[RMDB]
RNA sequence: GGGAACGACUCGAGUAGAGUCGAAAAAAAACAAUGUCAUUUUAAUCGGCAAAAGCGGAACUGGUAAAAGUCACUUAUCGCACGGAAUUGCCAAAGAAGUAUCCGAUACUAAAAAAUGGGUUGUUCCAUAUGUGAAUGUAGUAGAUUUCAUGACAAGACACUUAGAUUAUUUCGAUAAUCUAAGUGUAAAAGAAACAACAACAACAAC
Reactivity to DMS in 0.01 (KOAc 150mM, MgCl2 10mM, bicine 150mM(pH8.5), 24C), signal-to-noise 1, nucleotides 027 to 156: a020a010a050a070c040a040a050u030g000u020c000a040u040u010u010u000a110a180u000c060g020g010c000a090a000a030a050g010c040g030g000a110a100c070u010g000g040u000a080a030a130a160g000u010c020a060c070u000u000a080u010c100g020c020a100c050g000g000a040a070u000u030g000c010c050a030a070a050g000a070a050g020u000a110u000c120c060g020a150u000a170c070u020a010a000a020a090a110a100u000g040g030g060u000u000g020u000u000c000c010a040u000a020u000g010u010g000a020a090u010g000u030a050g020u010a100g000a140u000u000u010c030a020u010g000a150c120a070a080g000
Reactivity to 2A3 in 0.01 (KOAc 150mM, MgCl2 10mM, bicine 150mM(pH8.5), 24C), signal-to-noise 2, nucleotides 027 to 156: a000a000a000a000c080a030a040u100g010u040c000a040u000u080u000u120a110a040u080c040g000g000c040a010a000a050a150g040c030g060g020a040a020c040u050g000g030u080a040a090a080a030g050u010c010a060c040u120u240a120u160c040g030c070a020c020g060g000a080a060u070u040g010c030c000a140a010a050g040a030a010g040u050a060u010c030c040g080a030u030a060c020u170a070a030a010a020a040a190u060g020g010g000u000u020g010u040u010c030c020a040u070a070u180g080u020g040a080a040u080g000u140a100g030u000a020g050a080u040u120u080c070a010u010g030a040c010a020a030g060